[RMDB]
RNA sequence: GGGAACGACUCGAGUAGAGUCGAAAAGAUACGUAGGCCCAUGAAAUUGAUGAACUGAGAGUUGCUCGCAGUCCUCAGCGCACCAUCUGGAAUUCUAGUCUGAGGUUACAAUUAGAACUCCUGACCCCCUGAUAAUAAGCUUCGGCUUAUUAUCAGGAAAAGAAACAACAACAACAAC
Reactivity to 2A3 in 0.01 (KOAc 150mM, MgCl2 10mM, bicine 150mM(pH8.5), 24C), signal-to-noise 8, nucleotides 027 to 126: g040a020u120a060c060g060u070a060g060g030c000c010c020a020u080g090a040a110a050u170u150g040a070u070g020a070a060c040u050g010a010g010a000g130u080u080g050c030u030c060g060c020a010g020u040c000c010u020c010a010g000c010g000c040a040c030c000a050u050c030u040g020g030a050a050u100u000c010u030a030g050u010c050u050g080a050g080g060u090u120a040c010a000a020u060u030a030g020a030a020c010u020c010c020u030g070a090c000c010c000
Reactivity to DMS in 0.01 (KOAc 150mM, MgCl2 10mM, bicine 150mM(pH8.5), 24C), signal-to-noise 6, nucleotides 027 to 126: g000a130u010a060c130g030u010a060g000g010c030c010c020a090u030g010a070a080a120u010u010g010a060u010g010a090a070c040u000g010a080g010a090g020u010u000g000c050u020c130g010c040a030g010u010c040c020u000c020a040g020c190g020c080a070c050c040a040u020c050u000g010g000a050a040u020u010c040u010a020g000u000c090u010g010a150g030g010u020u010a080c100a060a040u010u000a050g000a040a040c040u000c010c000u000g000a130c040c030c050

The record gives the reactivity of an RNA of 177 nucleotides to 2A3 and DMS. It was measured as part of the RMDB libraries RFM100 and RFMREP. Conditions: 150 mM KOAc, 10 mM MgCl2 and 150 mM bicine (pH 8.5), 24 C. Reactivities are given for positions 27 through 126.